Conditions: 150 mM KOAc, 10 mM MgCl2 and 150 mM bicine (pH 8.5), 24 C.
An RNA of 177 nucleotides, treated with 2A3 and DMS and read out base by base.
2A3 adducts were read by reverse transcription with SuperScript II with manganese.
For DMS, 3,078 sequencing reads were counted.
The data come from the RNA Mapping Database (RMDB), library OK1LIB.

[RMDB]
RNA sequence: GGGAACGACUCGAGUAGAGUCGAAAAGAAGAUAAGAUACAAGACACCGUGGGCAGAUGACAAGAAAGUCCGUCGGUGUCGGUAAGGUCGUCAGUCACAGGCGACCGUUUUCUGUGACUUUAAAGAAAGCUAAUGGCCUAUUCGUAGGCCAUUAGCUAAAAGAAACAACAACAACAAC
Reactivity to 2A3 in 0.01 (KOAc 150mM, MgCl2 10mM, bicine 150mM(pH8.5), 24C), signal-to-noise 2, nucleotides 027 to 126: g080a060a000g050a060u150a070a010g000a000u070a020c090a050a020g000a000c000a000c000c000g000u040g000g010g000c060a060g080a290u120g090a230c020a160a000g070a150a090a020g030u000c000c000g100u110c010g030g000u000g000u000c000g000g000u020a000a000g000g000u000c000g000u000c000a030g190u080c070a060c000a120g000g000c000g000a000c000c000g000u140u020u000u000c090u040g120u010g100a110c030u000u070u130a000a180a000g150a080a070
Reactivity to DMS in 0.01 (KOAc 150mM, MgCl2 10mM, bicine 150mM(pH8.5), 24C), signal-to-noise 3, nucleotides 027 to 126: g000a070a010g000a100u030a110a090g000a140u020a010c040a080a160g000a000c000a010c040c010g030u020g030g010g050c010a070g010a200u040g000a140c300a170a100g000a130a160a070g000u000c000c000g010u020c040g000g050u000g040u000c060g000g020u000a060a050g030g000u020c000g030u000c000a050g000u000c210a100c290a100g050g000c000g000a010c010c000g010u000u000u000u000c020u020g000u000g010a130c100u020u030u010a080a110a180g020a080a090